[RMDB]
The record gives the reactivity of an RNA of 307 nucleotides to DMS and 2A3. 2A3 adducts were read by reverse transcription with SuperScript II with manganese. The reactions ran in a buffer of 150 mM KOAc, 10 mM MgCl2 and 150 mM bicine (pH 8.5), at 24 C. The 2A3 profile rests on 15,894 reads. For DMS, 3,746 sequencing reads were counted.
RNA sequence: GGGAACGACUCGAGUAGAGUCGAAAACCGACCGUUCGCGGUCGGAGUGACGAGCGUGAGCUCGUCACAGGUCUACUACGGUAGACCAACCUAUGCGUGAGCAUAGGACAGGACGUUCGCGUCCUGAACGGAGUCUACGGACUCCGAGAUAGCUACGUGAGUAGCUAUCAGCAGACACGGUGACGUGUCUGCAAGGGUCAGGCCGGCGAAAGUCGCCACAGUUUGGGGAAAGCUGUGCAGCCUGUAACCCCCCCACGAAAGUGGGUAGAGUAAGAUUCGUCUUACUCAAAAGAAACAACAACAACAAC
Reactivity to DMS in 0.01 (KOAc 150mM, MgCl2 10mM, bicine 150mM(pH8.5), 24C), signal-to-noise 1, nucleotides 027 to 266: c000c000g010a020c010c000g030u000u040c160g010c010g000g000u000c000g000g000a030g010u000g000a020c000g020a030g020c010g020u000g040a110g040c000u010c000g010u000c010a010c000a060g010g000u010c010u020a000c000u010a150c220g000g020u000a000g000a000c030c000a040a070c010c000u000a010u000g010c000g010u000g010a180g000c000a000u010a010g000g000a190c050a000g000g010a010c000g030u000u000c210g000c020g000u000c050c000u000g010a180a200c020g000g000a020g010u000c000u000a180c180g040g000a010c010u000c000c000g020a040g000a000u010a000g000c000u010a000c000g010u020g000a100g000u000a000g000c010u000a000u000c010a110g020c000a010g010a020c000a020c000g000g000u010g010a100c010g030u000g000u010c010u010g020c010a060a070g010g040g020u000c020a030g000g020c030c010g020g000c000g010a110a160a230g010u000c020g000c000c000a000c010a010g000u010u000u020g000g000g000g000a240a180a010g000c030u000g010u010g000c060a110g000c020c000u000g000u000a050a020c040c000c060c030c000c000c010a010c000g000a060a060a250g010u000g020g000g000u000a020
Reactivity to 2A3 in 0.01 (KOAc 150mM, MgCl2 10mM, bicine 150mM(pH8.5), 24C), signal-to-noise 6, nucleotides 027 to 266: c000c000g000a000c000c000g020u050u080c300g020c010g120g000u000c000g000g010a040g000u000g000a000c000g000a000g010c030g020u090g030a030g010c010u000c000g000u000c000a000c000a000g000g000u000c000u000a010c000u010a020c190g120g010u000a000g000a000c000c000a010a090c000c000u000a000u000g010c010g020u070g050a020g000c000a000u000a000g000g000a010c010a000g000g000a000c010g030u080u070c210g040c010g120u020c000c000u000g000a100a010c010g000g000a000g000u000c000u040a070c230g080g000a000c000u000c000c000g000a030g000a000u000a000g000c000u000a000c010g090u090g140a090g020u010a000g000c000u000a000u000c000a010g000c000a000g000a000c000a000c000g050g060u110g050a030c010g000u000g000u000c000u000g000c000a000a020g090g030g000u000c000a000g000g000c000c010g000g000c000g030a060a030a010g000u010c000g000c000c000a000c000a000g020u060u120u140g020g000g000g010a040a020a000g000c000u000g000u000g010c000a000g000c000c010u010g010u020a020a020c000c000c010c000c000c000c010a020c000g080a140a050a010g000u000g000g000g010u020a020